[RMDB]
RNA sequence: GGGAACGACUCGAGUAGAGUCGAAAACGACGUAUAGUGCAAAUGUUGUCAGACACUUUAGACAAAUUGUCUGAUUACUGUACGUUUGUUUGUUGGGCUCAUGGCUUUGAAUUAACGUCUGCAUCAUUAUAUAUAACUCCUUCGGGAGUUAUAUAUAAAAAGAAACAACAACAACAAC
Reactivity to DMS in 0.01 (KOAc 150mM, MgCl2 10mM, bicine 150mM(pH8.5), 24C), signal-to-noise 3, nucleotides 027 to 126: c000g010a000c010g000u000a000u000a020g010u000g000c250a110a110a140u020g010u010u010g010u000c010a010g000a010c010a010c160u010u000u010a090g010a170c250a020a030a020u000u000g010u000c000u000g010a020u000u010a020c010u000g000u000a010c000g000u000u000u010g010u000u000u000g010u010u000g010g010g010c040u010c060a050u010g010g000c040u010u000u000g000a090a070u000u000a070a080c100g000u010c030u000g010c070a070u000c050a100u000
The record gives the reactivity of an RNA of 177 nucleotides to DMS. DMS adducts were read by reverse transcription with MarathonRT. The reactions ran in a buffer of 150 mM KOAc, 10 mM MgCl2 and 150 mM bicine (pH 8.5), at 24 C. It was measured as part of the RMDB library 15KREP.